RNA sequence: GGGAACGACUCGAGUAGAGUCGAAAAGAAAGGCGCGCCUGACAUCUAAAUGGAGUUGCCGCGAGGCCCUCUUACGUCGAGAUCCUGGGAGACGAUCGCGGUCCGCCUGUUGGCAAGUCCACAGAAAGGGUAAUGUAUUCUUCGGAAUACAUUACCCAAAAGAAACAACAACAACAAC
Reactivity to DMS in 0.01 (KOAc 150mM, MgCl2 10mM, bicine 150mM(pH8.5), 24C), signal-to-noise 5, nucleotides 027 to 126: g000a040a060a050g000g010c020g000c120g010c020c000u010g010a120c100a050u010c070u010a080a110a130u020g010g010a080g010u000u020g000c020c030g040c120g010a100g010g000c010c120c060u000c020u020u010a090c140g020u000c030g020a110g000a080u020c030c020u000g000g010g010a120g020a030c090g030a120u010c060g010c090g010g000u000c080c020g040c030c010u020g010u000u010g000g010c070a030a090g000u000c020c050a040c070a040g010a080a100a100
Reactivity to 2A3 in 0.01 (KOAc 150mM, MgCl2 10mM, bicine 150mM(pH8.5), 24C), signal-to-noise 4, nucleotides 027 to 126: g070a030a080a020g060g010c010g000c000g020c030c000u050g040a030c000a090u070c060u180a070a140a060u210g020g000a060g090u070u060g030c000c000g000c000g020a050g030g010c010c030c010u000c010u050u160a080c060g020u010c030g030a050g020a110u070c010c000u060g000g030g000a050g000a000c030g030a010u030c030g000c010g020g000u010c000c020g020c000c010u050g040u060u050g010g000c040a040a030g060u000c000c010a030c010a060g060a080a110a000